[RMDB]
RNA sequence: GGGAACGACUCGAGUAGAGUCGAAAACACGAUGGCGAUGUUCGUGAGCAGCGUGACCUGAAACACCGGCAGGACCAGGGGCAGCACCAGCGCCAGCACGGCGGCGAUAAUGGCGAGCAGCGUGCGCUCGCUAUAUGCGGUUCGCCGCAUAUAGCGAAAAAGAAACAACAACAACAAC
Reactivity to 2A3 in 0.01 (KOAc 150mM, MgCl2 10mM, bicine 150mM(pH8.5), 24C), signal-to-noise 9, nucleotides 027 to 126: c050a010c030g080a070u100g060g000c040g050a050u080g060u130u060c050g020u060g070a040g030c030a010g020c020g060u060g030a090c000c010u030g050a100a080a010c050a030c040c030g040g000c030a040g010g040a030c020c020a010g020g010g010g000c020a020g010c010a020c020c020a010g030c010g000c010c010a010g020c030a010c050g060g020c020g010g030c010g020a020u080a160a060u150g050g000c020g010a020g020c030a010g020c020g050u050g020c020g020c020
Reactivity to DMS in 0.01 (KOAc 150mM, MgCl2 10mM, bicine 150mM(pH8.5), 24C), signal-to-noise 9, nucleotides 027 to 126: c060a070c080g000a070u000g010g020c040g010a090u000g010u010u010c070g010u000g010a130g010c040a070g010c060g020u010g000a120c050c030u000g000a100a090a090c100a080c060c040g010g010c040a060g000g010a100c090c050a080g000g000g000g010c040a070g010c040a070c050c050a080g010c040g010c020c020a090g000c070a060c080g010g000c040g000g000c030g000a070u000a070a080u000g010g010c030g010a060g010c040a080g010c060g010u000g010c060g020c100
Source information
Structure probing data (2A3 and DMS) for a 177-nucleotide construct. The DMS profile rests on 53,726 reads. Source: RMDB library OK2TST, as collected in RNAgym. For DMS the reverse transcriptase was MarathonRT. The 2A3 profile rests on 36,427 reads.